[RMDB]
This 177-nucleotide RNA was probed chemically with DMS and 2A3.
The reactions ran in a buffer of 150 mM KOAc, 10 mM MgCl2 and 150 mM bicine (pH 8.5), at 24 C.
It was measured as part of the RMDB libraries RFM100 and RFMREP.

RNA sequence: GGGAACGACUCGAGUAGAGUCGAAAAUAGCCCCGCUAAAGGCGACAUAUAGACCAGCAACGCCGAACCUAAAAGGCUUUUUUCGGCGAUGCCCAACUCGACUUUCUGCCCCGGAGCCAGCGGCUCCAUUCGCUAUGACAUUCGUGUCAUAGCGAAUAAAAGAAACAACAACAACAAC
Reactivity to DMS in 0.01 (KOAc 150mM, MgCl2 10mM, bicine 150mM(pH8.5), 24C), signal-to-noise 4, nucleotides 027 to 126: u000a140g040c030c000c000c090g000c110u030a050a060a110g000g010c050g020a090c180a080u040a090u020a120g000a070c060c120a180g000c040a080a090c030g000c000c020g000a040a080c100c010u020a050a030a130a150g010g000c300u020u030u000u000u000u000c010g030g000c000g000a030u020g000c020c020c070a070a080c030u000c020g010a040c060u000u000u000c020u000g010c120c000c000c070g060g020a020g000c010c010a130g020c160g020g010c000u010c000c020
Reactivity to 2A3 in 0.01 (KOAc 150mM, MgCl2 10mM, bicine 150mM(pH8.5), 24C), signal-to-noise 8, nucleotides 027 to 126: u090a020g040c010c000c010c010g030c070u120a080a070a030g040g000c010g010a020c050a010u230a010u060a040g060a040c020c040a010g010c000a030a020c010g010c000c000g020a020a020c010c020u120a130a070a030a080g080g000c080u120u060u010u010u020u020c010g000g010c010g020a030u060g020c020c020c010a020a040c010u020c030g040a040c030u060u080u000c030u060g030c000c000c010c030g000g000a000g000c000c010a090g070c110g080g000c000u000c000c000